[RMDB]
RNA sequence: GGGAACGACUCGAGUAGAGUCGAAAAGAAAGAAAGAAAGAAAUCUGACAGAAUGACGGAUUCGAUCGUUGUGGUCGGCGGGCCACCACGUCAUUCCUUCGAACUGUCUCCGGGCAGACCGCCAUAAAAAAGCGGAUCUACUUCGGUAGAUCCGCAAGUGACGAUAUGACUUCGGUCAUAUCGUCACAAAAGAAACAACAACAACAAC
Reactivity to 2A3 in 0.01 (KOAc 150mM, MgCl2 10mM, bicine 150mM(pH8.5), 24C), signal-to-noise 1, nucleotides 027 to 156: g010a020a050a000g050a010a130a040g080a070a150a010g050a050a150a050u090c080u090g010a020c030a040g180a130a150u080g010a020c030g000g010a060u020u090c090g030a070u190c050g050u000u000g000u000g010g010u010c050g000g030c020g010g030g000c000c000a000c030c000a000c000g040u020c030a080u020u070c020c000u050u060c020g070a050a060c000u000g000u010c000u010c050c030g000g050g000c040a040g030a070c010c030g010c020c020a090u300a060a110a020a030a010a010g000c010g000g000a000u000c000u000a000c020u030u010c090g070g000u000a000g000a000u000c040c000g000c000a000a000
Structure probing data (2A3) for a 207-nucleotide construct. For 2A3 the reverse transcriptase was SuperScript II with manganese. For 2A3, 797 sequencing reads were counted.